Chemical mapping of a 177-nucleotide RNA with 2A3 and DMS.
2A3 adducts were read by reverse transcription with SuperScript II with manganese.
The RNA was probed in 150 mM KOAc, 10 mM MgCl2 and 150 mM bicine (pH 8.5) at 24 C.
Reactivities are given for positions 27 through 126.
It was measured as part of the RMDB libraries RFM100 and RFMREP.

RNA sequence: GGGAACGACUCGAGUAGAGUCGAAAAUCAUGGGCGGUGCUAGGGUCGAAUUAGCUGCCGACUCAUUCACCCACAUGCCAAGCAAGAAACGCUUGAGAUAGCGAAGCUUAGCAGAUGAGUGAAUGAAACCUGUAGACCUGUUCGCAGGUCUACAGGUAAAAGAAACAACAACAACAAC
Reactivity to 2A3 in 0.01 (KOAc 150mM, MgCl2 10mM, bicine 150mM(pH8.5), 24C), signal-to-noise 4, nucleotides 027 to 126: u150c040a060u110g070g050g010c020g010g070u010g010c020u030a080g030g050g070u140c100g100a110a080u060u040a020g010c040u080g000c020c010g060a090c020u000c010a020u000u000c000a000c000c010c000a010c010a010u020g000c000c000a000a000g000c010a060a080g060a250a200a030c020g010c000u030u040g010a030g020a080u140a000g000c000g050a100a000g000c000u010u010a000g000c010a000g000a120u020g000a020g030u010g000a000a010u010g000a090a010
Reactivity to DMS in 0.01 (KOAc 150mM, MgCl2 10mM, bicine 150mM(pH8.5), 24C), signal-to-noise 3, nucleotides 027 to 126: u010c070a090u020g000g010g000c030g000g010u000g010c040u000a030g000g000g030u080c120g030a080a120u080u000a040g000c020u020g000c020c040g000a060c110u000c000a020u000u000c000a000c000c000c010a020c300a100u000g000c000c040a010a030g030c000a130a080g000a160a120a250c010g020c000u000u000g000a180g000a040u020a010g010c000g000a080a090g040c010u000u000a090g010c000a000g000a190u000g000a040g000u000g000a030a000u000g000a020a150